Chemical mapping of a 177-nucleotide RNA with 2A3 and DMS. For DMS, 37,217 sequencing reads were counted. Reactivities are given for positions 27 through 126. The RNA was probed in 150 mM KOAc, 10 mM MgCl2 and 150 mM bicine (pH 8.5) at 24 C. As a SHAPE reagent, 2A3 marks flexible, mostly unpaired nucleotides at the ribose 2'-OH.
RNA sequence: GGGAACGACUCGAGUAGAGUCGAAAAAUGAUUAUUCCAAACCUGCUAAUCUCCGCGUUAGUGUAUUCGGCUCGGGUCUAUUUGAUUGGGUCCCAAUCAGAUGGACAGGCUGCACCCGCAGCCGCCAGGAUGAUUAGGUGUUCGCGCCUAGUCGUCCAAAAGAAACAACAACAACAAC
Reactivity to 2A3 in 0.01 (KOAc 150mM, MgCl2 10mM, bicine 150mM(pH8.5), 24C), signal-to-noise 9, nucleotides 027 to 126: a000u250g060a090u120u140a090u140u080c030c010a050a040a070c020c020u050g020c000u030a040a030u040c050u030c080c040g040c030g050u030u040a050g010u040g060u110a180u040u100c040g020g000c030u040c050g120g010g010u000c010u010a030u010u020u020g020a020u010u020g060g070g170u140c050c040c000a000a010u010c010a010g020a030u020g000g010a010c010a030g010g000c000u000g000c010a110c010c050c080g000c010a000g000c000c010g010c020c020a030
Reactivity to DMS in 0.01 (KOAc 150mM, MgCl2 10mM, bicine 150mM(pH8.5), 24C), signal-to-noise 9, nucleotides 027 to 126: a070u030g000a100u020u020a060u010u000c010c030a070a090a100c070c040u010g000c030u010a070a080u010c050u010c040c050g010c090g020u000u010a060g020u010g000u020a060u020u010c020g000g000c020u010c060g020g000g010u000c010u000a010u000u010u010g000a030u010u010g000g010g020u040c160c020c000a030a020u000c010a020g010a030u000g010g000a040c030a100g000g010c000u000g000c020a110c170c120c220g000c010a030g010c000c000g000c100c070a110